[RMDB]
RNA sequence: GGGAACGACUCGAGUAGAGUCGAAAAUGGCUAAUGAUGUUCUCUGCGAAAUACACAACUUACUACAAACUGAUCUUAUUUGAAUUGAGGGUUACUGUAGCUACUACUGUAGCUACCGUAAUCCUCAAUAGAGUCAAAGUUUCGACUUUGACUCUAUAAAAGAAACAACAACAACAAC
Reactivity to DMS in 0.01 (KOAc 150mM, MgCl2 10mM, bicine 150mM(pH8.5), 24C), signal-to-noise 9, nucleotides 027 to 126: u010g000g010c050u010a060a080u010g010a070u010g010u010u000c030u000c020u000g010c060g010a060a070a080u010a060c090a050c080a060a070c070u010u010a080c080u010a060c120a040a070a090c110u010g010a080u010c060u000u000a100u010u010u020g010a090a100u010u000g000a010g000g000g000u000u000a000c000u000g010u000a000g010c000u000a010c000u010a120c300u020g010u000a000g010c000u000a000c000c060g010u000a000a000u000c010c000u000c000a000
Reactivity to 2A3 in 0.01 (KOAc 150mM, MgCl2 10mM, bicine 150mM(pH8.5), 24C), signal-to-noise 9, nucleotides 027 to 126: u100g060g010c040u070a100a010u100g090a030u070g030u080u020c020u000c020u030g040c050g090a040a070a070u240a020c050a010c020a110a060c050u120u170a040c040u080a040c070a070a160a060c060u060g070a120u090c050u090u160a190u170u170u200g170a180a090u050u050g000a010g000g000g000u000u000a000c000u000g010u000a000g000c000u000a000c000u030a050c040u070g000u010a000g000c000u000a000c000c000g000u000a000a000u000c000c000u000c000a000